An RNA of 207 nucleotides, treated with 2A3 and DMS and read out base by base. As a SHAPE reagent, 2A3 marks flexible, mostly unpaired nucleotides at the ribose 2'-OH. Source: RMDB library ARCHII, as collected in RNAgym. The RNA was probed in 150 mM KOAc, 10 mM MgCl2 and 150 mM bicine (pH 8.5) at 24 C. DMS adducts were read by reverse transcription with MarathonRT.
RNA sequence: GGGAACGACUCGAGUAGAGUCGAAAAUGGCGAGCCGAGGUGGCGAACUCGUUAAAACGCCAUCGCCAAUAACUGGCAAAGAAAACAACAACUUCGCAUUAGCUGCCUAAGCUAGCAAAUGCGGUUCCGCCCUCCAUCGCCCAUGUGGUAGGUGUCGCCAUACAUCUAUCUUCGGAUAGAUGUAUGGAAAAGAAACAACAACAACAAC
Reactivity to 2A3 in 0.01 (KOAc 150mM, MgCl2 10mM, bicine 150mM(pH8.5), 24C), signal-to-noise 8, nucleotides 027 to 156: u070g020g000c020g010a020g040c030c010g020a020g020g020u050g010g010c010g000a060a040c020u030c060g120u080u120a030a100a030a050c010g000c010c010a040u030c040g000c000c030a020a090u200a100a060c150u090g020g000c030a060a080a010g110a040a100a020a020c110a020a010c020a040a070c060u120u080c040g000c000a010u020u010a040g000c000u030g030c040c100u190a170a040g010c080u100a000g000c010a000a040a020u010g000c000g000g020u080u040c030c020g020c010c010c000u010c010c010a050u040c030g020c020c010c000a060u150g030u080g000g040u050a060g000g020u020g060u080c050g000
Reactivity to DMS in 0.01 (KOAc 150mM, MgCl2 10mM, bicine 150mM(pH8.5), 24C), signal-to-noise 3, nucleotides 027 to 156: u000g000g020c040g000a110g030c080c030g000a080g040g020u000g020g020c020g050a100a100c070u000c000g000u000u000a050a060a120a150c060g010c010c000a040u010c030g000c020c030a110a170u000a100a090c080u020g000g000c020a090a080a120g010a080a090a120a150c040a080a100c050a040a050c030u010u010c100g010c050a110u000u010a060g010c000u000g020c050c060u010a130a100g000c050u000a050g010c010a050a040a040u000g000c030g020g000u010u000c040c020g020c010c000c000u000c090c000a070u000c050g020c010c000c010a270u000g000u000g000g020u000a030g000g010u010g010u000c070g000